[RMDB]
RNA sequence: GGGAACGACUCGAGUAGAGUCGAAAAGAUAUGGACAUGCGAUUCCGAUAAGCAUACACUCGGAAACGAGUGAUGCUUUUGACGGAAAUUGCAUGUCCUAAGUCAAACUCUGUGUUCGCACAGAGAACUUGACUGUUCGGUUCGCCGAACAGUCAAGAAAAGAAACAACAACAACAAC
Reactivity to DMS in 0.01 (KOAc 150mM, MgCl2 10mM, bicine 150mM(pH8.5), 24C), signal-to-noise 1, nucleotides 027 to 126: g010a100u000a300u010g000g000a020c000a020u000g020c000g000a000u010u000c010c000g050a160u000a000a020g020c000a000u010a240c000a000c010u000c020g010g000a200a070a210c010g020a020g010u010g020a060u000g000c030u000u010u010u010g020a270c160g000g040a000a010a020u000u000g010c000a010u000g000u010c000c000u000a010a130g000u010c030a070a030a180c000u000c010u000g010u000g000u010u020c290g040c010a000c000a000g020a010g000a100a090
Reactivity to 2A3 in 0.01 (KOAc 150mM, MgCl2 10mM, bicine 150mM(pH8.5), 24C), signal-to-noise 1, nucleotides 027 to 126: g020a000u110a080u210g020g000a000c000a000u000g000c000g020a000u000u000c000c020g040a050u020a100a000g000c020a000u200a270c010a040c010u010c000g100g000a110a030a060c000g020a000g000u020g000a000u010g000c010u000u000u000u160g260a110c070g000g040a000a120a130u000u020g010c020a000u000g000u000c000c000u010a020a000g010u000c010a060a030a070c020u000c000u030g000u000g060u080u030c300g060c180a030c000a010g010a020g000a050a100

About this RNA
Structure probing data (DMS and 2A3) for a 177-nucleotide construct. The RNA was probed in 150 mM KOAc, 10 mM MgCl2 and 150 mM bicine (pH 8.5) at 24 C. For 2A3 the reverse transcriptase was SuperScript II with manganese. DMS adducts were read by reverse transcription with MarathonRT. The data come from the RNA Mapping Database (RMDB), library TTRDES.